[RMDB]
RNA sequence: GGGAACGACUCGAGUAGAGUCGAAAAAGACGAGGUGAAGCCAAUCAUGGAUGUGCUCGGGGAACGCCUCGCCAGCACGCCAGGGCGCAACGCUGAAGCAGCGAACGGCGAGGCCACACCAAUCGCCCGAGUACGGAGCAUUCGUGCUCCGUACUCGAAAAGAAACAACAACAACAAC
Reactivity to DMS in 0.01 (KOAc 150mM, MgCl2 10mM, bicine 150mM(pH8.5), 24C), signal-to-noise 4, nucleotides 027 to 126: a060g020a260c050g000a060g010g030u020g000a100a120g000c000c030a060a170u020c130a050u030g040g000a070u000g010u000g020c010u000c010g000g000g000g000a110a110c300g010c020c020u010c020g000c030c020a240g000c090a120c160g000c020c000a050g000g000g010c030g000c180a130a050c090g010c010u000g010a160a240g070c100a240g000c020g000a070a080c110g000g020c010g000a030g000g040c040c160a060c100a170c010c030a080a050u030c040g000c020c020
Reactivity to 2A3 in 0.01 (KOAc 150mM, MgCl2 10mM, bicine 150mM(pH8.5), 24C), signal-to-noise 5, nucleotides 027 to 126: a000g060a030c060g000a030g050g040u220g100a080a000g020c020c000a030a090u150c070a200u160g090g020a070u100g030u060g040c020u040c070g030g000g010g010a110a050c040g040c030c000u000c010g000c020c020a040g030c090a010c050g010c010c000a050g060g120g020c080g000c140a160a090c130g020c070u060g060a150a030g060c070a010g010c020g030a060a040c060g030g000c000g000a010g000g000c020c000a040c000a000c000c010a020a040u070c040g040c010c000